[RMDB]
RNA sequence: GGGAACGACUCGAGUAGAGUCGAAAAGAAACCCAGCUGUUACUAGCAGUUAUUCAUGAGUGAAUACAUAGCUCAUGUAAAGGUAACGCAGAGAACUGAAACAUCUAAGUACCUGCAGGAAGAGAAAGUAAAAACGAUUUCGUAAGUAGCGGCGAGCGGAUAGUUCUCGGUUCGCCGAGAACUAUCCAAAAGAAACAACAACAACAAC
Reactivity to 2A3 in 0.01 (KOAc 150mM, MgCl2 10mM, bicine 150mM(pH8.5), 24C), signal-to-noise 3, nucleotides 027 to 156: g050a060a080a020c000c000c000a000g010c020u030g010u020u020a030c020u030a040g080c070a070g020u050u070a060u050u090c000a000u000g020a000g010u060g060a100a030u070a120c050a050u050a010g000c000u000c000a000u000g000u080a000a080a000g040g020u030a040a020c040g010c030a010g050a010g030a100a010c050u080g020a070a100a090c060a110u060c040u110a110a000g020u000a080c010c000u000g000c040a030g070g090a070a070g030a020g030a100a040a030g070u180a080a090a020a010a010c040g030a080u010u100u080c020g020u060a060a020g000u000a030g010c030g010g020c040g010a020g070c080
Reactivity to DMS in 0.01 (KOAc 150mM, MgCl2 10mM, bicine 150mM(pH8.5), 24C), signal-to-noise 1, nucleotides 027 to 156: g030a110a130a300c000c000c000a070g100c000u000g020u060u000a010c010u000a200g030c030a080g030u020u000a140u020u000c010a010u000g000a000g000u000g000a150a150u010a180c270a110u000a300g010c010u000c000a000u000g000u000a070a090a110g000g020u000a050a080c110g020c030a060g030a090g030a110a300c030u030g040a130a050a040c100a140u000c060u010a090a040g000u030a030c000c000u000g030c000a180g000g000a040a000g000a110g030a070a060a150g010u040a070a040a110a220a100c090g000a300u000u000u000c010g000u000a090a060g000u000a000g000c030g000g000c000g020a060g000c060
An RNA of 207 nucleotides, treated with 2A3 and DMS and read out base by base. The RNA was probed in 150 mM KOAc, 10 mM MgCl2 and 150 mM bicine (pH 8.5) at 24 C. 2A3 adducts were read by reverse transcription with SuperScript II with manganese. Values cover nucleotides 27 to 156. The 2A3 profile rests on 1,681 reads.